[RMDB]
RNA sequence: GGGAACGACUCGAGUAGAGUCGAAAAUCACUCUUGAACGAACUUAAAAUUGCAUCAUACGUCACGGUAGGUUUCGUCUUGCUGUGCGUACGUUGCACACCAAUUAUAGUGGAGCUUUUUGGUUAAGAGAAUACGACUCUUUCGAGAGUCGUAUUCUAAAAGAAACAACAACAACAAC
Reactivity to DMS in 0.01 (KOAc 150mM, MgCl2 10mM, bicine 150mM(pH8.5), 24C), signal-to-noise 3, nucleotides 027 to 126: u000c060a170c050u000c020u010u020g040a070a080c110g020a050a110c140u000u010a020a060a070a090u060u000g010c000a010u000c010a040u000a010c020g020u050c020a010c000g010g000u000a000g010g020u000u010u040c210g000u000c000u000u000g000c000u000g010u000g000c010g000u000a000c070g020u000u000g000c000a050c220a070c030c040a050a060u040u010a070u010a070g040u010g000g000a090g040c150u000u000u000u010u030g000g010u000u010a040a070g000
Reactivity to 2A3 in 0.01 (KOAc 150mM, MgCl2 10mM, bicine 150mM(pH8.5), 24C), signal-to-noise 8, nucleotides 027 to 126: u060c020a030c020u050c020u030u140g100a100a040c060g010a050a020c030u100u110a070a030a080a150u140u070g000c000a000u000c010a020u000a020c010g050u060c230a010c000g000g000u000a010g030g020u110u300u230c190g080u080c050u010u000g000c000u010g000u000g010c000g000u000a000c010g000u000u020g000c010a000c000a000c010c000a050a100u100u080a140u070a130g090u050g090g050a040g100c030u020u060u020u030u060g040g010u070u030a070a030g040

An RNA of 177 nucleotides, treated with DMS and 2A3 and read out base by base.
For DMS the reverse transcriptase was MarathonRT.
Source: RMDB libraries RFM100 and RFMREP, as collected in RNAgym.
The reactions ran in a buffer of 150 mM KOAc, 10 mM MgCl2 and 150 mM bicine (pH 8.5), at 24 C.